Structure probing data (DMS) for a 177-nucleotide construct. It was measured as part of the RMDB library OK2TST. Conditions: 150 mM KOAc, 10 mM MgCl2 and 150 mM bicine (pH 8.5), 24 C. For DMS the reverse transcriptase was MarathonRT.

[RMDB]
RNA sequence: GGGAACGACUCGAGUAGAGUCGAAAAGACCGAAACCGUUUAUGGACUGGCGGCCGAUGCCACCCAACCUGAAGCGGUGAAGCAGAUUUUUAGUGCCAAAGGUCGCCCAGCGAAUCAUCCGUUGAUACAAAAUGACGGUCUUCGGACCGUCAUUUUGAAAAGAAACAACAACAACAAC
Reactivity to DMS in 0.01 (KOAc 150mM, MgCl2 10mM, bicine 150mM(pH8.5), 24C), signal-to-noise 1, nucleotides 027 to 126: g010a070c010c000g000a070a140a070c040c020g100u000u000u000a070u000g020g000a240c220u000g000g000c100g000g030c020c200g030a170u000g070c160c010a000c010c140c130a110a140c090c030u040g000a270a070g000c000g090g020u000g000a090a110g010c020a080g000a120u010u000u000u000u000a090g000u010g020c200c090a000a070a260g000g000u000c000g000c060c020c030a070g000c040g010a100a030u000c070a110u000c050c180g000u000u000g000a110u000a150